[RMDB]
RNA sequence: GGGAACGACUCGAGUAGAGUCGAAAAACAAAGAGAUCGAAAGAGCAAUGUGUAACUCAUCAUCCUAGCGAAUGGUUGGGCUCGAAAGAUCGAGUCUUACCAUCACAUCCCGGACGCUAGAAAAAAAACUGUAGUAAUUCUUCGGAAUUACUACAGUAAAAGAAACAACAACAACAAC
Reactivity to 2A3 in 0.01 (KOAc 150mM, MgCl2 10mM, bicine 150mM(pH8.5), 24C), signal-to-noise 2, nucleotides 027 to 126: a000c060a000a110a010g120a020g020a100u150c090g040a090a080a080g000a000g030c000a070a130u140g060u000g030u110a060a030c010u010c020a040u030c000a020u040c040c010u010a000g000c000g100a110a030u010g020g020u020u020g010g000g000c000u010c010g060a140a170a080g170a180u040c000g000a010g010u000c000u010u010a000c000c010a000u050c020a020c000a050u050c000c010c000g040g030a020c010g010c000u020a020g000a120a020a000a010a000a000a000
Reactivity to DMS in 0.01 (KOAc 150mM, MgCl2 10mM, bicine 150mM(pH8.5), 24C), signal-to-noise 3, nucleotides 027 to 126: a080c120a050a050a100g000a120g000a030u010c040g010a070a080a070g010a030g020c050a040a070u000g030u010g000u010a080a040c040u000c020a040u010c060a090u000c040c000u000a010g010c010g010a230a010u000g000g000u010u000g010g000g000c000u000c010g030a040a130a110g010a070u000c010g000a020g010u000c000u000u000a010c000c000a030u010c140a070c120a120u000c010c020c010g000g000a210c010g020c000u000a010g030a020a000a000a150a030a060a150
The record gives the reactivity of an RNA of 177 nucleotides to 2A3 and DMS. The RNA was probed in 150 mM KOAc, 10 mM MgCl2 and 150 mM bicine (pH 8.5) at 24 C. It was measured as part of the RMDB library M2PK90. For DMS, 1,901 sequencing reads were counted.